[RMDB]
Structure probing data (2A3 and DMS) for a 177-nucleotide construct. Conditions: 150 mM KOAc, 10 mM MgCl2 and 150 mM bicine (pH 8.5), 24 C. 2A3 adducts were read by reverse transcription with SuperScript II with manganese. The data come from the RNA Mapping Database (RMDB), libraries RFM100 and RFMREP.
RNA sequence: GGGAACGACUCGAGUAGAGUCGAAAAUUUUAGUGUCAAAGGACAGAUGGUUAGCUUACAGGAGGAAGGCGAGGAGUAUACGCCGCGUCAGGGACUAUAUGCUAACUUAAGUUCUAGGGAGACGGAAUUUAAUCUACCGAUUCGUCGGUAGAUUAAAAAAAGAAACAACAACAACAAC
Reactivity to 2A3 in 0.01 (KOAc 150mM, MgCl2 10mM, bicine 150mM(pH8.5), 24C), signal-to-noise 4, nucleotides 027 to 126: u150u110u050u080a080g020u040g030u040c020a020a060a020g000g010a000c020a020g130a060u140g030g000u020u010a000g000c010u030u050a040c030a060g000g060a040g020g050a150a030g010g000c000g000a010g010g010a030g050u130a070u050a220c110g020c020c000g020c000g000u000c000a010g130g030g000a010c000u010a010u000a000u100g000c000u000a000a000c000u000u050a020a010g000u000u010c020u040a040g030g100g010a050g000a010c030g050g020a020a020
Reactivity to DMS in 0.01 (KOAc 150mM, MgCl2 10mM, bicine 150mM(pH8.5), 24C), signal-to-noise 7, nucleotides 027 to 126: u010u010u000u020a090g030u000g000u010c020a050a060a060g000g000a020c010a040g010a140u010g000g010u010u000a010g010c010u000u000a020c090a030g000g010a200g020g000a230a250g000g010c000g010a040g010g010a080g000u030a160u020a120c240g020c010c010g000c020g000u000c010a100g020g000g000a280c000u010a060u010a010u000g010c000u010a010a020c010u000u000a100a180g000u010u000c000u010a080g020g010g000a070g000a030c030g010g010a070a070